Structure probing data (2A3 and DMS) for a 177-nucleotide construct. The reactions ran in a buffer of 150 mM KOAc, 10 mM MgCl2 and 150 mM bicine (pH 8.5), at 24 C. Reactivities are given for positions 27 through 126. Source: RMDB library OK1LIB, as collected in RNAgym. For 2A3, 35,865 sequencing reads were counted. 2A3 adducts were read by reverse transcription with SuperScript II with manganese.
RNA sequence: GGGAACGACUCGAGUAGAGUCGAAAAUGGAAGCGCCAACGGUCGAGCGCCCUCUCCAGGGGCCUCUGUAGCCGGGGCCGCAUCCCUACCACCCCUCCAGACGGAGGAAGGGGGCGGGAGCGACCGACGGUGAUGACAUCUUCGGAUGUCAUUACUGAAAAGAAACAACAACAACAAC
Reactivity to 2A3 in 0.01 (KOAc 150mM, MgCl2 10mM, bicine 150mM(pH8.5), 24C), signal-to-noise 9, nucleotides 027 to 126: u090g020g030a090a040g060c030g010c050c020a180a120c020g010g040u080c020g000a000g010c140g010c010c000c000u080c010u040c030c030a030g020g000g010g000c010c000u020c040u070g140u130a030g020c010c010g010g000g010g000c000c010g000c010a220u030c010c000c000u030a070c000c020a080c010c020c000c000u000c010c010a150g060a300c190g060g020a020g020g000a020a170g010g000g000g000g000c040g000g000g010a030g020c000g010a030c000c010g030a040
Reactivity to DMS in 0.01 (KOAc 150mM, MgCl2 10mM, bicine 150mM(pH8.5), 24C), signal-to-noise 9, nucleotides 027 to 126: u040g010g010a080a150g000c050g010c030c030a080a100c020g010g020u010c070g000a080g000c170g010c010c010c010u010c070u040c210c200a170g000g000g000g000c020c010u000c020u020g020u030a080g010c030c030g000g000g000g010c040c020g010c030a090u010c000c000c010u010a160c060c050a100c070c040c000c000u000c010c010a170g040a150c250g000g000a030g000g010a040a040g000g010g000g010g020c300g000g000g000a060g010c000g000a080c000c000g000a230